An RNA of 177 nucleotides, treated with 2A3 and read out base by base. 2A3 adducts were read by reverse transcription with SuperScript II with manganese.

[RMDB]
RNA sequence: GGGAACGACUCGAGUAGAGUCGAAAACCCCAGGGGCUGACCAUUAACAGCCAGCCCUGCCCAUCUUGGGGGGCUCCAGGCUCCUGGCCUGGCUCUGACCUGCUCUUAAUUAACCUCUCCUUCACCUUGCGUUCGUAAAUUUCGAUUUACGAACGCAAAAAGAAACAACAACAACAAC
Reactivity to 2A3 in 0.01 (KOAc 150mM, MgCl2 10mM, bicine 150mM(pH8.5), 24C), signal-to-noise 3, nucleotides 027 to 126: c000c010c000c010a020g020g030g000g010c000u000g040a060c020c030a090u070u170a100a070c040a100g000c000c050a000g000c010c000c020u040g030c000c000c000a100u100c060u170u100g000g010g000g020g010g000c020u010c030c010a010g000g020c010u040c040c110u220g010g010c000c000u020g000g000c000u060c010u020g020a040c000c010u060g020c030u030c000u090u060a110a110u090u080a080a100c010c010u000c010u020c020c040u040u030c020a040c020c010u050
It was measured as part of the RMDB library RFM100. The RNA was probed in 150 mM KOAc, 10 mM MgCl2 and 150 mM bicine (pH 8.5) at 24 C.